Source: RMDB libraries RFM100 and RFMREP, as collected in RNAgym.
The record gives the reactivity of an RNA of 177 nucleotides to 2A3 and DMS.
2A3 adducts were read by reverse transcription with SuperScript II with manganese.
DMS adducts were read by reverse transcription with MarathonRT.
[RMDB]
RNA sequence: GGGAACGACUCGAGUAGAGUCGAAAAACCAUAGGAAGUGCCGACUUUAAACAGCAGCUGCUGGUCUCCUUUGCAAGUGUCCAUCCUUCGACCAUAACCUUUGUGGUUUGGUCUUGGAUGGAGUACCACAUCUUGUCUAUUUCGAUAGACAAGAUGUAAAAGAAACAACAACAACAAC
Reactivity to 2A3 in 0.01 (KOAc 150mM, MgCl2 10mM, bicine 150mM(pH8.5), 24C), signal-to-noise 9, nucleotides 027 to 126: a000c020c000a050u080a030g070g020a050a050g030u050g120c030c020g040a070c030u070u080u110a110a110a020c030a020g020c010a020g040c030u130g000c010u030g030g050u020c020u030c020c000u050u060u090g070c090a120a070g040u040g060u080c000c000a000u000c000c000u030u050c090g010a000c000c000a030u160a190a040c010c020u100u160u300g230u290g060g000u000u000u010g000g000u000c000u000u000g000g000a000u000g000g000a000g000u010a010c000c010
Reactivity to DMS in 0.01 (KOAc 150mM, MgCl2 10mM, bicine 150mM(pH8.5), 24C), signal-to-noise 9, nucleotides 027 to 126: a110c060c010a100u020a070g000g000a060a060g010u000g010c070c070g000a080c040u000u010u010a050a070a150c080a060g010c030a070g010c080u010g010c020u000g000g000u010c060u000c020c020u010u010u000g020c130a080a070g010u010g010u000c000c000a000u000c000c000u010u010c300g000a010c000c000a020u030a010a000c000c000u000u030u030g020u010g010g010u000u000u000g000g000u000c000u000u000g000g000a010u000g000g000a020g010u010a050c080c140